RNA sequence: GGGAACGACUCGAGUAGAGUCGAAAACAAAUAUUUUCGCUCAUAACAUCUGGAAUGAUGCCAAAAGAAAGGGUGCCUAUCGUCCACCAGACCGAUAACAGGGCGUGAAAACGAACUUUAUCAAGCAAAGAAAACUCUUCUUCGGAAGAGUUUUCUUAAAAGAAACAACAACAACAAC
Reactivity to DMS in 0.01 (KOAc 150mM, MgCl2 10mM, bicine 150mM(pH8.5), 24C), signal-to-noise 1, nucleotides 027 to 126: c030a110a150a050u000a260u000u000u000u020c170g010c000u020c060a150u000a080a150c070a230u040c120u000g000g000a130a040u060g000a080u020g000c020c000a040a000a030a120g000a110a080a040g030g000g000u000g010c000c060u060a030u050c050g000u000c020c080a070c010c050a110g000a050c120c050g000a020u000a020a030c150a000g000g010g090c010g000u010g010a030a020a080a010c050g000a010a050c000u030u010u000a020u000c010a170a070g000c170a030
Reactivity to 2A3 in 0.01 (KOAc 150mM, MgCl2 10mM, bicine 150mM(pH8.5), 24C), signal-to-noise 1, nucleotides 027 to 126: c050a000a090a050u290a120u060u140u010u090c000g000c000u000c000a060u010a090a170c000a060u090c100u040g000g070a060a040u060g000a010u150g040c010c020a080a110a000a020g100a090a140a070g120g110g090u120g060c000c000u080a090u070c000g020u040c030c000a000c000c040a000g080a090c000c030g020a000u040a060a000c090a000g040g000g000c000g100u030g080a000a010a010a010c010g040a010a050c010u000u120u120a020u040c080a130a000g080c010a030